[RMDB]
Record summary:
Chemical mapping of a 177-nucleotide RNA with 2A3 and DMS. Conditions: 150 mM KOAc, 10 mM MgCl2 and 150 mM bicine (pH 8.5), 24 C. For DMS, 1,062 sequencing reads were counted. Source: RMDB library OK1LIB, as collected in RNAgym.
RNA sequence: GGGAACGACUCGAGUAGAGUCGAAAACGCACUUCGAGGAACUCCGCGAACGCGCCGCCCUCGAACAACACCGCGUCCAGCACCAGCGGAUCGGCCAGCGCCGCGGCCAGCGCGUCCUCAUCGUCAGCGCACUGCACAAAUUCGUUUGUGCAGUGCGAAAAGAAACAACAACAACAAC
Reactivity to 2A3 in 0.01 (KOAc 150mM, MgCl2 10mM, bicine 150mM(pH8.5), 24C), signal-to-noise 3, nucleotides 027 to 126: c070g060c030a060c040u070u000c050g010a020g020g050a100a080c040u060c080c030g070c020g050a110a040c050g030c030g030c030c010g000c020c010c000u010c010g080a060a020c050a050a010c040a040c050c030g020c050g050u060c020c030a030g010c050a070c030c030a040g020c000g020g000a020u070c020g030g010c010c010a040g010c020g020c010c020g050c020g010g010c020c010a040g010c050g010c000g010u030c000c010u070c020a120u060c030g170u080c030a060g070
Reactivity to DMS in 0.01 (KOAc 150mM, MgCl2 10mM, bicine 150mM(pH8.5), 24C), signal-to-noise 1, nucleotides 027 to 126: c090g000c030a030c070u000u110c030g000a010g000g000a000a010c040u080c120c040g000c000g000a000a130c120g020c220g000c000c100g000c250c030c000u000c000g000a030a000c160a220a090c300a240c090c110g000c010g020u000c010c020a000g000c030a080c060c090a070g020c090g010g000a060u000c160g000g000c000c030a060g040c000g000c120c090g000c180g010g000c070c090a090g000c000g020c000g000u000c000c000u040c140a030u010c050g000u000c020a050g000